[RMDB]
RNA sequence: GGGAACGACUCGAGUAGAGUCGAAAACUUCGAUCCAUAAUAACUGGCGGCGAUCCUGCCUGCUCAUCGCCGUAUCUGUCGCCUGCGGCUGGAUUGCCUGGAGCGGCAAUGUGCUGGCCCUUCCUGUGGCCUAGGAGCUAUUCGUAGCUCCUAGGCCAAAAGAAACAACAACAACAAC
Reactivity to 2A3 in 0.01 (KOAc 150mM, MgCl2 10mM, bicine 150mM(pH8.5), 24C), signal-to-noise 1, nucleotides 027 to 126: c000u040u000c060g120a090u040c060c000a020u080a260a000u060a240a120c100u000g010g000c030g000g000c010g000a030u050c000c010u020g020c000c020u040g070c030u040c010a000u080c000g050c020c000g060u080a240u000c110u040g100u030c000g000c000c000u030g030c010g000g050c080u000g130g120a110u070u070g110c070c010u030g000g000a000g000c000g100g000c000a070a030u020g020u050g100c030u080g050g050c000c030c000u000u000c000c000u130g050u050
This 177-nucleotide RNA was probed chemically with 2A3. The RNA was probed in 150 mM KOAc, 10 mM MgCl2 and 150 mM bicine (pH 8.5) at 24 C. Values are in units of 0.01, from 0 to 300, in steps of 10. 2A3 adducts were read by reverse transcription with SuperScript II with manganese.